[RMDB]
Chemical mapping of a 177-nucleotide RNA with 2A3 and DMS. For 2A3, 5,723 sequencing reads were counted. For DMS the reverse transcriptase was MarathonRT. The RNA was probed in 150 mM KOAc, 10 mM MgCl2 and 150 mM bicine (pH 8.5) at 24 C.
RNA sequence: GGGAACGACUCGAGUAGAGUCGAAAAGACAGUGGAUCGCGCUCUACAGAUGGUGAGUAGCGAGCGCUCCAAUUUGGGUGCGUAUCAAAACCGUAUGGAGAUGGCCUCGCGUAGUCAGGCAACGGCAGACACAAGAUGUUUUCGAACAUCUUGUGUCAAAAGAAACAACAACAACAAC
Reactivity to 2A3 in 0.01 (KOAc 150mM, MgCl2 10mM, bicine 150mM(pH8.5), 24C), signal-to-noise 5, nucleotides 027 to 126: g060a010c060a050g080u060g070g050a080u040c010g000c010g020c030u000c020u090a070c040a070g190a170u140g090g050u080g040a080g040u060a050g030c030g040a010g020c020g000c000u000c010c010a110a170u150u140u120g060g010g000u080g030c040g040u100a080u290c050a010a050a020a090c030c000g040u060a080u110g070g020a080g010a070u100g060g010c010c010u030c030g000c030g030u040a030g030u030c040a000g000g030c020a050a040c020g060g000c050a040
Reactivity to DMS in 0.01 (KOAc 150mM, MgCl2 10mM, bicine 150mM(pH8.5), 24C), signal-to-noise 5, nucleotides 027 to 126: g000a090c080a080g010u000g020g010a070u000c060g010c020g000c030u000c020u000a090c060a100g000a100u010g010g010u010g010a080g020u010a090g010c150g010a050g010c020g000c020u000c010c000a060a150u010u010u010g010g010g010u000g010c080g020u000a080u010c130a070a050a070a120c040c020g000u000a070u000g000g000a070g000a070u010g010g000c090c020u000c050g010c040g020u000a040g000u000c040a080g000g010c060a070a040c080g000g020c170a130